[RMDB]
RNA sequence: GGGAACGACUCGAGUAGAGUCGAAAAGAUAUGGAGUCAAGGGAGCUGGCGAUCGGAAACGAUCGUACAGCUUUGAUCUUGCUCCUAAGUCAAAAGAUGAUUGAAAAGUUCGCUUUUCAAUCAUCAACGAUGUAUCUAUCUUCGGAUAGAUACAUCGAAAAGAAACAACAACAACAAC
Reactivity to DMS in 0.01 (KOAc 150mM, MgCl2 10mM, bicine 150mM(pH8.5), 24C), signal-to-noise 5, nucleotides 027 to 126: g000a030u010a300u000g000g000a020g010u010c020a010a010g000g010g000a000g030c000u000g000g010c000g000a020u000c010g000g000a060a060a110c000g010a010u000c000g020u000a060c000a010g000c000u000u000u000g010a060u010c010u000u000g000c010u000c000c000u000a020a070g000u000c020a080a080a140a140g000a010u000g000a020u000u000g000a010a020a010a010g010u000u010c300g000c010u000u000u000u010c000a000a000u000c000a000u000c010a050a100
Reactivity to 2A3 in 0.01 (KOAc 150mM, MgCl2 10mM, bicine 150mM(pH8.5), 24C), signal-to-noise 3, nucleotides 027 to 126: g020a010u030a030u100g010g020a010g090u300c050a000a010g010g000g010a010g000c020u000g010g000c010g000a010u000c000g010g020a080a030a030c010g000a000u000c020g020u070a160c040a000g000c000u020u020u000g000a000u010c000u000u000g010c000u000c000c000u000a070a010g030u010c010a010a030a020a150g010a000u010g000a010u020u000g020a020a000a010a000g030u070u210c300g050c190u020u000u000u000c000a000a010u000c000a000u000c000a000a000